Background: The record gives the reactivity of an RNA of 177 nucleotides to DMS and 2A3. DMS adducts were read by reverse transcription with MarathonRT. For 2A3 the reverse transcriptase was SuperScript II with manganese.
RNA sequence: GGGAACGACUCGAGUAGAGUCGAAAACUGAGACAAGAUACCGGGCCCUACGGGGCGCAGCAGGCGCGAAACCUUUACACUGCACGACAGUGCGAUAGGGGGACUCCGAGUGUGAGGGCAUAUAGCCGCGUAAUUAGGAUUUCGAUCCUAAUUACGCAAAAGAAACAACAACAACAAC
Reactivity to DMS in 0.01 (KOAc 150mM, MgCl2 10mM, bicine 150mM(pH8.5), 24C), signal-to-noise 4, nucleotides 027 to 126: c030u010g000a140g000a100c090a070a070g000a130u010a040c080c030g010g020g010c030c000c010u000a110c140g020g000g010g040c040g010c040a090g010c060a060g020g000c030g000c040g010a090a120a130c010c000u010u000u010a050c030a040c030u010g000c010a060c110g000a120c290a060g000u000g000c040g000a100u020a050g000g020g020g000g000a170c090u010c000c020g000a050g000u010g000u020g000a040g000g000g020c060a040u030a100u000a120g000c040c060
Reactivity to 2A3 in 0.01 (KOAc 150mM, MgCl2 10mM, bicine 150mM(pH8.5), 24C), signal-to-noise 6, nucleotides 027 to 126: c030u050g040a020g050a090c060a080a060g030a060u070a100c020c010g030g050g010c010c000c000u030a060c130g020g020g020g000c020g000c000a010g050c020a010g030g050c010g000c010g070a050a020a040c000c000u010u020u020a030c040a020c010u050g000c000a030c130g260a080c060a050g000u020g050c050g050a050u170a090g050g000g010g010g060a040c020u010c020c020g020a020g020u060g020u040g020a090g000g030g000c050a010u140a020u050a200g040c040c020